[RMDB]
RNA sequence: GGGAACGACUCGAGUAGAGUCGAAAACAAAUAUUGGGAUAAGACGUCUAAUAUUCACUAAUAGAUACCACAAAAGGUGUUAGUUCAUUAAGACAGCAGGACGGUGGCCAUGGAAGUCGGCAUCCGCUUUGUACCCUGUUUUCGAACAGGGUACAAAAAAAGAAACAACAACAACAAC
Reactivity to DMS in 0.01 (KOAc 150mM, MgCl2 10mM, bicine 150mM(pH8.5), 24C), signal-to-noise 4, nucleotides 027 to 126: c060a080a080a060u020a060u020u000g020g030g010a060u020a070a120g000a110c130g000u000c020u000a030a050u030a030u010u000c060a070c080u020a070a050u020a080g010a060u020a050c010c000a060c180a080a030a150a130g000g020u010g000u010u010a050g000u010u010c100a060u000u020a060a070g020a050c090a080g020c050a040g020g010a060c040g010g010u000g000g010c020c030a080u010g010g010a040a060g000u010c040g000g020c050a050u000c030c020g010c130
Reactivity to 2A3 in 0.01 (KOAc 150mM, MgCl2 10mM, bicine 150mM(pH8.5), 24C), signal-to-noise 3, nucleotides 027 to 126: c030a000a070a000u130a030u050u110g050g000g080a010u110a170a050g080a100c080g040u000c010u060a040a020u040a040u090u040c060a010c030u030a020a090u060a090g150a090u200a130c020c000a060c110a040a030a070a030g040g000u010g000u000u050a070g020u060u050c020a000u030u090a060a000g040a030c020a040g050c000a010g000g080a020c000g050g030u000g020g000c010c000a070u050g070g000a010a100g040u040c010g000g010c010a020u000c000c050g010c000

The data come from the RNA Mapping Database (RMDB), libraries RFM100 and RFMREP.
Structure probing data (DMS and 2A3) for a 177-nucleotide construct.
2A3 adducts were read by reverse transcription with SuperScript II with manganese.
For 2A3, 1,582 sequencing reads were counted.